RNA sequence: GGGAACGACUCGAGUAGAGUCGAAAACGAACAAUCCGAAGCUGAAUCUGGACCAAAGCGCCAAGUUGAAUGUGGAGAUGGGCAAAAUCCAUGCGAAUCAGAAGUAUCGCGCACUGAUUGUCGGCACACCAGUGUUACACUUCGGUGUAACACUGGUAAAAGAAACAACAACAACAAC
Reactivity to 2A3 in 0.01 (KOAc 150mM, MgCl2 10mM, bicine 150mM(pH8.5), 24C), signal-to-noise 2, nucleotides 027 to 126: c050g110a000a010c050a060a060u000c040c020g030a060a010g010c030u030g010a060a030u050c030u030g010g050a010c000c070a050a030a040g050c050g000c040c020a030a050g010u080u120g120a090a050u080g000u030g050g010a090g000a030u060g000g040g000c060a010a120a000a060u030c040c010a030u110g040c020g040a040a020u070c020a050g050a130a020g060u070a020u120c030g000c020g010c070a000c050u020g000a070u060u060g110u050c010g010g000c040a020c010
Reactivity to DMS in 0.01 (KOAc 150mM, MgCl2 10mM, bicine 150mM(pH8.5), 24C), signal-to-noise 2, nucleotides 027 to 126: c090g010a060a100c110a060a050u000c030c020g020a090a070g010c080u000g000a080a080u000c070u000g000g000a070c090c070a040a060a100g030c100g010c030c040a020a080g000u000u000g010a040a080u010g040u000g030g000a160g000a090u010g020g000g010c030a050a020a070a090u000c020c040a060u010g000c080g030a080a060u000c080a020g020a070a080g020u010a080u000c100g020c060g000c060a100c030u000g010a050u000u010g000u000c050g000g000c140a100c250